[RMDB]
Structure probing data (2A3) for a 177-nucleotide construct. It was measured as part of the RMDB library OK1LIB.
RNA sequence: GGGAACGACUCGAGUAGAGUCGAAAACAGCGAAAGCCAUGGUACGGCCGAACAUCUGCUCUGUGAGCAUGAUGGACACCGUGGACUUACCCGACUGCAUUGCAGGCGAGUAAAUCCCGAUUAGGUGGCGCUCAAGGGCUUUCGAGCCCUUGAGCGCAAAAGAAACAACAACAACAAC
Reactivity to 2A3 in 0.01 (KOAc 150mM, MgCl2 10mM, bicine 150mM(pH8.5), 24C), signal-to-noise 1, nucleotides 027 to 126: c010a010g000c060g010a070a000a060g020c000c000a020u050g050g120u140a000c000g000g000c100c000g070a010a040c000a010u050c000u040g000c000u090c090u300g250u210g050a040g040c060a030u210g000a000u000g000g010a000c000a000c040c000g020u010g010g010a050c000u000u000a000c010c000c000g000a000c000u000g000c060a300u010u190g000c000a000g000g010c000g030a020g020u000a000a010a010u020c010c000c020g040a040u140u140a060g160g000u010g210